[RMDB]
This 177-nucleotide RNA was probed chemically with 2A3 and DMS. For DMS, 8,497 sequencing reads were counted.

RNA sequence: GGGAACGACUCGAGUAGAGUCGAAAAGAAAAGUCCGCGAAAGAAAAGGUGCGCAACAAACAAGCGCACCAAAGGGGUACAUGACCGAAACCCCGCGAUUCGGUCGAAACAAAACGCGGACAAAGAAAGUCCUAUGAUUAUUCGUAAUCAUAGGACUAAAAGAAACAACAACAACAAC
Reactivity to 2A3 in 0.01 (KOAc 150mM, MgCl2 10mM, bicine 150mM(pH8.5), 24C), signal-to-noise 5, nucleotides 027 to 126: g070a020a100a000a010g010u000c010c000g000c000g060a040a110a100g090a030a140a040a040g000g000u010g000c000g050c010a040a120c060a170a300a030c040a160a050g010c000g000c000a000c000c000a020a000a000g000g010g000g010u050a030c010a140u180g010a000c010c000g020a030a070a070c010c010c050c010g050c060g050a040u020u020c030g020g000u000c010g070a050a070a030c070a010a080a000a000c000g000c000g000g000a000c000a020a010a000g010a060a080
Reactivity to DMS in 0.01 (KOAc 150mM, MgCl2 10mM, bicine 150mM(pH8.5), 24C), signal-to-noise 5, nucleotides 027 to 126: g000a120a110a140a120g000u000c000c000g000c000g010a110a100a150g010a080a100a130a090g000g000u000g010c010g000c000a090a110c160a130a110a130c300a110a140g020c000g000c000a000c000c000a000a020a080g030g000g000g000u020a060c170a090u020g000a000c000c000g000a000a030a090c040c000c020c060g010c110g000a100u000u010c020g010g000u010c010g000a080a080a080c070a070a050a090a090c030g020c010g000g000a000c010a010a040a050g000a140a120